Conditions: 150 mM KOAc, 10 mM MgCl2 and 150 mM bicine (pH 8.5), 24 C. Structure probing data (DMS) for a 177-nucleotide construct. Source: RMDB library VIROID, as collected in RNAgym.
RNA sequence: GGGAACGACUCGAGUAGAGUCGAAAAACUAGGAACACCGGGGACAGGUCGGGUCCGUGGGAUGCUUUUCCCGAUUCCGUCCCAACCCUUCCCCCGAGAGGUCACCCCAGCGGAUGGCAGGACCCCAGCAUAACUUCAAGUUCGCUUGAAGUUAUGCAAAAGAAACAACAACAACAAC
Reactivity to DMS in 0.01 (KOAc 150mM, MgCl2 10mM, bicine 150mM(pH8.5), 24C), signal-to-noise 1, nucleotides 027 to 126: a100c110u000a220g000g010a120a020c090a100c080c060g000g020g020g020a080c190a090g010g020u010c130g000g000g000u000c050c090g060u050g000g010g010a030u000g020c090u020u010u000u000c010c010c020g020a100u000u010c060c070g000u000c000c000c010a050a130c060c010c010u000u010c060c020c010c010c000g020a130g000a060g040g000u000c080a140c020c030c010c020a140g040c090g010g000a020u000g010g010c060a080g040g000a110c030c000c010c060a150